About this RNA
Structure probing data (DMS and 2A3) for a 177-nucleotide construct. The data come from the RNA Mapping Database (RMDB), library OK1LIB. DMS (dimethyl sulfate) methylates the pairing face of unpaired adenines and cytosines.
RNA sequence: GGGAACGACUCGAGUAGAGUCGAAAACGUGGAGGUUACACUGGGCGUCGAACUGCGAUGCACAGCGGAGGUUCCUCCUCCGGCAGGGUUUCCCAAGCUGAGAAGGAGUUCGACACAUCCGACAUUCAGCUAGCAUCCUAUUCGUAGGAUGCUAGCUAAAAGAAACAACAACAACAAC
Reactivity to DMS in 0.01 (KOAc 150mM, MgCl2 10mM, bicine 150mM(pH8.5), 24C), signal-to-noise 2, nucleotides 027 to 126: c090g000u010g000g020a050g050g000u000u010a060c050a100c060u010g030g010g020c090g000u000c020g000a080a050c070u010g030c030g050a000u010g040c120a040c000a000g000c060g000g000a070g000g000u020u010c100c080u000c020c000u030c000c060g020g060c110a080g000g020g000u030u010u000c000c010c040a040a130g000c000u050g000a040g000a150a220g000g010a030g010u000u000c000g020a090c020a010c070a100u000c080c000g010a060c110a140u030u000c100
Reactivity to 2A3 in 0.01 (KOAc 150mM, MgCl2 10mM, bicine 150mM(pH8.5), 24C), signal-to-noise 5, nucleotides 027 to 126: c080g010u040g030g050a080g030g050u100u110a040c030a040c070u080g030g050g020c040g010u000c010g010a080a110c070u110g140c090g010a030u020g060c250a010c010a020g030c010g000g100a050g050g010u110u070c010c020u030c000c000u000c020c030g040g030c070a040g050g010g000u020u080u140c010c010c010a020a030g000c020u030g020a020g020a120a040g000g070a010g010u040u050c010g040a010c000a010c020a140u060c020c010g050a020c050a140u080u090c020